[RMDB]
RNA sequence: GGGAACGACUCGAGUAGAGUCGAAAACGUUCCCUGGUCCGGCGGCGCGUCGCCGGUUUGGGCUUCUCUCCUUUGCGCGGAGACGCAUGAGAACCUCGAUAAGCGCAAGCUUACCGAAACUCAUGUGAAAAGCGCAAUAAUUCGUUAUUGCGCUUUUAAAAGAAACAACAACAACAAC
Reactivity to DMS in 0.01 (KOAc 150mM, MgCl2 10mM, bicine 150mM(pH8.5), 24C), signal-to-noise 9, nucleotides 027 to 126: c080g010u000u000c000c000c000u020g010g010u010c010c000g000g010c010g010g000c100g030c260g010u020c040g010c000c010g000g010u000u010u010g030g010g000c030u000u010c090u010c010u000c010c020u000u010u020g010c170g040c260g010g010a040g000a130c050g000c000a000u000g000a010g000a070a120c300c120u000c000g010a050u000a000a000g000c000g000c300a100a160g010c000u000u000a000c020c000g010a030a100a150c010u000c000a000u000g000u000g000
Reactivity to 2A3 in 0.01 (KOAc 150mM, MgCl2 10mM, bicine 150mM(pH8.5), 24C), signal-to-noise 4, nucleotides 027 to 126: c040g010u000u010c000c010c000u010g050g040u000c020c030g030g010c010g020g010c040g030c080g220u170c070g020c010c000g000g000u020u030u000g000g010g010c000u080u020c020u020c000u010c030c010u090u160u160g080c090g010c060g030g000a010g000a010c010g000c000a000u020g000a000g000a040a060c020c070u010c000g000a010u000a000a000g000c010g020c100a050a030g000c000u010u000a010c020c000g000a000a020a010c000u000c000a000u010g000u000g010